[RMDB]
RNA sequence: GGGAACGACUCGAGUAGAGUCGAAAACUAUUACUAUACCUAAUGACACUAAGUUUAUUGUAGAAGCGGUUAUAGAUGCUUCUACUGAGUUAAGUAGUAUAGUAGUUACUUAUAAGCAAGGUAACAGUGUAUUAAACUCAGUAUGGUAUAGAAGUAGCAAUGGGGCAUUUUUCGAAAUGCCCCAUUGAAAAGAAACAACAACAACAAC
Reactivity to 2A3 in 0.01 (KOAc 150mM, MgCl2 10mM, bicine 150mM(pH8.5), 24C), signal-to-noise 3, nucleotides 027 to 156: c000u000a030u030u070a040c000u000a000u010a020c000c000u080a090a080u080g030a030c020a030c120u120a200a140g050u110u100u090a150u130u120g060u040a000g000a010a010g000c010g070g100u150u110a140u090a180g110a120u170g000c000u000u000c000u000a000c000u000g000a000g000u010u060a120a070g000u040a000g000u000a040u050a050g130u030a060g000u010u000a000c010u050u050a090u060a300a100g070c080a050a010g000g000u000a000a010c000a030g060u000g000u090a030u030u040a070a030a020c000u000c000a000g030u020a090u120g000g000u000a000u000a010g020a030a010g000u010a010g010
Reactivity to DMS in 0.01 (KOAc 150mM, MgCl2 10mM, bicine 150mM(pH8.5), 24C), signal-to-noise 1, nucleotides 027 to 156: c010u010a050u000u010a200c000u020a020u000a020c030c010u000a160a110u040g010a170c110a180c060u000a060a140g000u000u010u010a070u010u010g030u010a000g000a040a040g050c010g030g010u010u010a170u020a210g020a130u010g000c000u030u000c000u000a010c000u000g020a130g050u010u000a020a120g010u010a050g000u000a010u000a120g010u010a120g000u000u010a030c020u000u010a180u000a070a220g010c190a130a070g000g020u020a010a020c010a270g000u000g000u010a090u020u000a040a020a020c000u000c000a010g000u000a120u000g040g020u010a020u000a020g020a080a090g000u000a060g000

The record gives the reactivity of an RNA of 207 nucleotides to 2A3 and DMS. High 2A3 reactivity points to a flexible backbone, as in loops and unpaired stretches. Reactivities are given for positions 27 through 156. Source: RMDB library OK3TST, as collected in RNAgym. DMS adducts were read by reverse transcription with MarathonRT. The RNA was probed in 150 mM KOAc, 10 mM MgCl2 and 150 mM bicine (pH 8.5) at 24 C.